[RMDB]
RNA sequence: GGGAACGACUCGAGUAGAGUCGAAAAGUCCCCCGGUUCGCCGGGGGACAAAUAUUAAGACCGAAGCUUGGGCCAGAGACACUUCCCUUGGCCGCAAAACAAAAACAUUGCUGUUCGCAGCAAUGAAUCAGUUAUUCAAGUUCGCUUGAAUAACUGAAAAAGAAACAACAACAACAAC
Reactivity to DMS in 0.01 (KOAc 150mM, MgCl2 10mM, bicine 150mM(pH8.5), 24C), signal-to-noise 2, nucleotides 027 to 126: g000u000c000c010c000c010c000g000g010u000u010c170g020c000c020g060g000g050g010g010a000c000a000a020a000u010a080u020u000a070a100g000a110c090c020g010a060a130g010c120u000u000g020g000g000c010c000a060g020a110g010a150c210a170c280u000u000c030c010c020u010u000g030g030c040c000g040c100a050a040a090a070c180a020a050a140a080a080c010a010u000u000g010c010u000g010u000u030c250g000c010a000g010c000a010a000u000g000a120a050
Reactivity to 2A3 in 0.01 (KOAc 150mM, MgCl2 10mM, bicine 150mM(pH8.5), 24C), signal-to-noise 2, nucleotides 027 to 126: g020u000c000c020c000c050c010g010g030u010u040c180g090c040c000g060g130g040g000g000a000c000a000a010a000u020a000u020u100a080a020g030a020c010c080g120a090a020g040c040u080u170g060g010g000c000c010a050g000a040g030a150c040a070c150u060u050c050c010c000u020u050g020g000c000c020g010c040a080a110a030a030c030a020a090a020a030a030c000a010u000u020g000c000u020g000u100u080c230g010c100a000g010c020a000a000u010g000a020a070